[RMDB]
RNA sequence: GGGAACGACUCGAGUAGAGUCGAAAAUCUUCUUGUUGAUUCGCCGGAGCUCCUUCUCGGCUAUUCGCUUUUUCUUCCUUUCCUCUACCCACUGCUCGAGGGCCUCCUCCCUCGCCUUCGAGCCGGGCUCCUGGGUGCUUCGGCACCCAGAAAAGAAACAACAACAACAAC
Reactivity to 2A3 in 0.01 (KOAc 150mM, MgCl2 10mM, bicine 150mM(pH8.5), 24C), signal-to-noise 3, nucleotides 027 to 129: u020c040u160u010c040u040u110g050u040u110g030a150u000u020c080g000c030c010g020g020a020g020c070u020c000c000u090u010c080u040c040g010g010c000u060a060u040u100c030g040c080u110u070u030u060u030c020u040u060c000c040u000u010u030c010c000u000c010u010a080c000c000c000a100c050u080g010c000u000c030g000a000g020g000g010c000c050u160c000c000u010c000c040c000u030c020g000c000c020u040u010c010g000a000g030c000c010g000g010g010c000u040c010
Reactivity to DMS in 0.01 (KOAc 150mM, MgCl2 10mM, bicine 150mM(pH8.5), 24C), signal-to-noise 4, nucleotides 027 to 129: u030c060u080u060c100u000u070g040u010u010g010a080u000u000c080g030c070c090g000g020a040g040c060u000c000c040u050u010c080u000c070g010g080c120u000a080u050u000c080g030c070u020u010u050u000u000c030u020u010c080c000u010u000u010c020c030u050c020u020a160c040c040c010a210c210u020g080c020u030c000g050a050g070g030g010c000c000u070c120c050u030c010c010c030u010c070g000c000c010u000u070c010g010a050g030c030c150g020g040g010c050u020c050